[RMDB]
The data come from the RNA Mapping Database (RMDB), library 15KREP. Structure probing data (DMS and 2A3) for a 177-nucleotide construct. 2A3 adducts were read by reverse transcription with SuperScript II with manganese. For DMS the reverse transcriptase was MarathonRT.
RNA sequence: GGGAACGACUCGAGUAGAGUCGAAAAGUGAAGGACAAUGUCAGUUUCGUUGCUGAUGAUUCAGGUACUCCCGUUGUUGAGUAUCUGUCUAAAGAAGACCUACAUACAUUGUAUGUAGACCCUAAGUGUACUGUAUCUUCUUCGGAAGAUACAGUACAAAAGAAACAACAACAACAAC
Reactivity to DMS in 0.01 (KOAc 150mM, MgCl2 10mM, bicine 150mM(pH8.5), 24C), signal-to-noise 2, nucleotides 027 to 126: g010u010g000a060a090g010g020a110c180a050a090u000g010u000c040a030g010u010u000u000c210g000u000u000g010c000u000g010a060u000g010a020u000u000c010a010g020g000u000a010c020u000c010c050c220g030u010u010g030u010u000g020a010g010u000a000u000c000u000g000u000c000u010a110a040a100g000a110a150g000a060c150c010u000a020c010a020u000a000c010a250u020u010g030u010a010u010g000u000a000g010a090c010c000c020u000a080a110g000u000
Reactivity to 2A3 in 0.01 (KOAc 150mM, MgCl2 10mM, bicine 150mM(pH8.5), 24C), signal-to-noise 2, nucleotides 027 to 126: g060u040g080a090a000g060g010a050c060a080a110u140g010u010c020a010g010u000u030u190c160g050u080u080g000c000u000g000a020u020g000a000u000u020c010a000g000g000u000a010c000u010c020c030c010g060u040u020g000u010u000g000a010g000u000a000u000c000u010g000u000c050u080a060a030a010g100a030a020g060a010c000c010u000a000c020a000u010a000c030a130u180u300g020u000a000u000g030u000a020g030a070c000c020c000u050a160a080g070u020